Structure probing data (DMS and 2A3) for a 170-nucleotide construct. Reactivities are given for positions 27 through 129. In probing experiments dimethyl sulfate is read out at A N1 and C N3, which are open when not base-paired. The 2A3 profile rests on 3,188 reads. The RNA was probed in 150 mM KOAc, 10 mM MgCl2 and 150 mM bicine (pH 8.5) at 24 C. The DMS profile rests on 6,583 reads. Source: RMDB library 15KLIB, as collected in RNAgym. 2A3 adducts were read by reverse transcription with SuperScript II with manganese. As a SHAPE reagent, 2A3 marks flexible, mostly unpaired nucleotides at the ribose 2'-OH.

RNA sequence: GGGAACGACUCGAGUAGAGUCGAAAACCCGUUGAUCCUACUUUCUUACACAGAUUCUAUUCACUUAAGGCUGCAGUCCAUGGGUGGAAGAUGGUUGUGUGUGAUAAGGUACGUUCUCUCAAAUUGACAAGAUCUGCCUUCGGGCAGAUCAAAAGAAACAACAACAACAAC
Reactivity to DMS in 0.01 (KOAc 150mM, MgCl2 10mM, bicine 150mM(pH8.5), 24C), signal-to-noise 4, nucleotides 027 to 129: c000c020c030g030u070u070g010a090u000c120c070u000a000c030u000u030u000c060u000u000a030c030a050c020a070g040a300u050u000c010u080a240u000u080c070a000c010u020u010a150a100g020g070c050u000g030c160a170g010u040c020c000a160u000g000g010g070u020g020g030a060a020g020a070u030g020g050u070u060g040u020g000u020g010u000g020a020u030a030a010g060g000u000a110c100g010u020u010c040u070c050u050c100a060a090a180u080u070g020a080c220a040a120
Reactivity to 2A3 in 0.01 (KOAc 150mM, MgCl2 10mM, bicine 150mM(pH8.5), 24C), signal-to-noise 4, nucleotides 027 to 129: c000c000c020g010u060u300g020a090u130c000c000u000a020c030u030u070u020c000u020u060a000c000a000c000a050g010a120u040u020c010u100a300u040u000c000a000c010u110u050a150a000g000g000c000u200g160c280a000g090u000c000c000a090u180g010g000g010u010g000g010a020a020g040a030u060g080g090u090u120g110u000g000u000g010u010g020a030u010a070a010g000g020u000a000c040g000u020u000c080u010c000u030c030a050a090a220u160u220g050a040c030a070a100